[RMDB]
RNA sequence: GGGAACGACUCGAGUAGAGUCGAAAAACACCAAAACUGAAAACGGAAGGCAAUCCUUCCACGACGAUACUUCCUUUCCUUUGAUCGUCGUUACUACUGGCAUAGCCACAAAGGAGAACAAACAUGAGCGCGGACACUGACUUCGGUCAGUGUCCAACGGUAUAGUACAGUUCGCUGUACUAUACCGAAAAGAAACAACAACAACAAC
Reactivity to 2A3 in 0.01 (KOAc 150mM, MgCl2 10mM, bicine 150mM(pH8.5), 24C), signal-to-noise 9, nucleotides 027 to 156: a000c070a100c020c050a070a060a040a070c180u260g080a100a070a040a040c080g000g000a000a000g030g000c180a060a170u260c010c000u010u010c000c000a010c000g000a000c000g000a000u060a150c040u060u090c010c050u060u080u040c010c000u030u010u030g020a010u010c000g010u000c000g000u030u040a030c050u030a020c020u010g010g010c080a260u120a150g020c010c000a030c050a040a040a010g030g010a020g010a070a040c040a080a090a030c070a130u270g080a060g130c150g000c090g050g000a000c000a000c000u000g000a000c000u030u060c170g050g000u000c000a000g000u000g000u000c000c000a000a000
Reactivity to DMS in 0.01 (KOAc 150mM, MgCl2 10mM, bicine 150mM(pH8.5), 24C), signal-to-noise 2, nucleotides 027 to 156: a090c040a270c020c000a040a080a090a300c110u010g000a080a070a070a080c050g000g010a050a030g050g010c140a120a190u000c000c000u000u020c000c000a080c000g000a040c000g010a050u000a040c060u000u000c010c030u000u020u000c010c020u000u000u000g020a050u000c010g010u010c020g040u000u000a040c060u000a050c060u000g000g000c020a160u020a060g020c030c020a070c080a030a050a070g010g000a080g000a100a250c090a090a060a130c080a110u000g000a140g040c070g000c070g010g000a040c000a030c020u000g000a010c000u000u000c300g040g000u000c000a040g030u000g020u000c010c010a010a020